[RMDB]
RNA sequence: GGGAACGACUCGAGUAGAGUCGAAAAUCUGGCGCGGGCGGGCAGCACGUCAACACGACCGAUUCGGCGGUGCGUAUCACGCAUAUUGCAACCGGCAUCGUGGUGCAGUGUCAGGCGGAACGUUCGAUGCAUUUAAUGGAUUCGUCCAUUAAAUGCAAAAAGAAACAACAACAACAAC
Reactivity to DMS in 0.01 (KOAc 150mM, MgCl2 10mM, bicine 150mM(pH8.5), 24C), signal-to-noise 8, nucleotides 027 to 126: u010c040u010g000g020c060g020c070g010g010g030c050g000g000g010c070a110g020c040a050c050g010u000c060a080a120c060a040c050g010a070c010c020g000a070u010u000c110g010g020c050g000g010u000g010c010g010u000a100u010c190a080c050g010c070a040u000a060u000u010g010c040a090a070c050c020g000g000c110a080u000c030g010u000g010g010u000g010c050a080g010u000g010u010c070a090g000g010c030g020g000a070a080c120g010u000u000c070g000a220
Reactivity to 2A3 in 0.01 (KOAc 150mM, MgCl2 10mM, bicine 150mM(pH8.5), 24C), signal-to-noise 4, nucleotides 027 to 126: u010c020u050g060g020c030g000c050g050g030g010c010g000g020g010c010a020g000c010a010c030g070u050c030a030a040c010a010c040g020a030c000c020g030a070u070u070c050g030g000c010g020g040u030g000c010g020u030a100u180c060a020c080g020c040a020u040a090u070u270g000c020a060a060c010c010g040g000c040a050u020c020g050u050g000g030u050g030c040a030g010u020g020u080c040a040g010g030c010g020g020a070a020c020g020u070u050c050g020a040